[RMDB]
RNA sequence: GGGAACGACUCGAGUAGAGUCGAAAACUGCCGCCGGGACGCAGUGAUCCUCGCAGGGUCACACGGUCGCCUCGGGUCGGCCUCGUGUCGGCUCGACCUGCGAGGGGAGCGAGUGGCGAGCCCGACCAAAACUUUCUCGCCUUCGGGCGAGAAAGAACUACUCGGUGUUCUUCGGAACACCGAGUAGAAAAGAAACAACAACAACAAC
Reactivity to 2A3 in 0.01 (KOAc 150mM, MgCl2 10mM, bicine 150mM(pH8.5), 24C), signal-to-noise 1, nucleotides 027 to 156: c000u020g030c000c030g000c000c000g050g090g230a030c060g000c050a250g210u000g000a000u000c000c000u000c000g000c020a010g000g060g000u230c060a090c040a090c300g000g000u020c010g000c020c020u020c000g000g000g030u000c010g000g000c000c050u090c090g300u300g000u010c010g010g000c020u000c030g050a110c000c000u000g000c000g000a000g000g000g000g000a000g000c000g020a130g140u080g000g010c000g000a060g010c050c030c050g000a020c000c010a000a100a000a030c000u000u000u000c020u020c000g020c040c000u050u050c150g110g000g000c000g020a000g010a000a000a000g000a000a000

An RNA of 207 nucleotides, treated with 2A3 and read out base by base.
Values cover nucleotides 27 to 156.
2A3 adducts were read by reverse transcription with SuperScript II with manganese.
The data come from the RNA Mapping Database (RMDB), library M2RFPK.